[RMDB]
Description: This 177-nucleotide RNA was probed chemically with 2A3 and DMS. The RNA was probed in 150 mM KOAc, 10 mM MgCl2 and 150 mM bicine (pH 8.5) at 24 C. 2A3 adducts were read by reverse transcription with SuperScript II with manganese. The 2A3 profile rests on 1,594 reads. For DMS, 1,529 sequencing reads were counted. For DMS the reverse transcriptase was MarathonRT. It was measured as part of the RMDB library OK2TST.

RNA sequence: GGGAACGACUCGAGUAGAGUCGAAAAGAACUCGCCCGCGAGGCGGGGGUCACCCGGCGCACGGUGAUGCACUACGCCGAAAUCGGCCUGCUGCCGCCCGACCAAGUGACGGCCUCGGGCCGGGUGCCUACGCUUAGUGGUUCGCCACUAAGCGUAGAAAAGAAACAACAACAACAAC
Reactivity to 2A3 in 0.01 (KOAc 150mM, MgCl2 10mM, bicine 150mM(pH8.5), 24C), signal-to-noise 1, nucleotides 027 to 126: g030a020a050c000u000c020g020c030c030c020g190c100g080a230g000g000c010g000g030g000g010g070u100c010a070c080c000c000g040g060c080g000c000a070c070g020g030u020g070a140u110g060c000a010c060u110a050c050g010c000c020g070a140a000a030u100c010g000g020c000c000u010g000c030u030g020c010c000g000c000c000c000g080a150c040c070a250a030g030u070g140a030c000g030g000c000c030u050c000g010g010g010c010c000g010g000g020u040g010c010
Reactivity to DMS in 0.01 (KOAc 150mM, MgCl2 10mM, bicine 150mM(pH8.5), 24C), signal-to-noise 2, nucleotides 027 to 126: g000a100a160c010u000c020g020c050c000c000g060c270g020a210g000g010c010g030g000g020g010g040u010c080a080c020c020c010g030g000c030g010c050a130c130g000g020u000g030a140u010g040c030a060c050u010a110c080g030c010c030g020a040a100a130u010c020g000g000c020c020u010g000c050u010g000c000c010g020c080c020c020g020a150c210c130a220a130g000u010g030a030c010g000g000c010c050u000c040g010g000g020c010c000g000g000g010u000g000c060
As a SHAPE reagent, 2A3 marks flexible, mostly unpaired nucleotides at the ribose 2'-OH.